[RMDB]
RNA sequence: GGGAACGACUCGAGUAGAGUCGAAAAGCGGGGCCGAGGCAUUGCGCUCUGAUCCGGCCGGUUCAGCCCAGGUCCUCGCGCCGGUAGUGGGCCUGACGCCAAAGCAGACUGAGCUCGCCUUCUCCCGGAUAGCCUGGCUGUUCGCAGCCAGGCUAUCAAAAGAAACAACAACAACAAC
Reactivity to 2A3 in 0.01 (KOAc 150mM, MgCl2 10mM, bicine 150mM(pH8.5), 24C), signal-to-noise 2, nucleotides 027 to 126: g060c020g000g000g140g030c060c010g010a010g030g030c080a110u030u150g030c120g030c050u000c000u030g030a040u100c000c000g060g000c000c030g000g000u010u090c060a050g090c030c090c000a030g020g010u020c000c010u150c020g000c080g030c000c040g040g040u100a050g060u060g000g010g000c000c010u050g040a020c050g060c000c000a020a030a010g000c050a000g040a060c080u110g030a000g160c000u000c050g020c010c010u100u180c000u040c000c000c000g000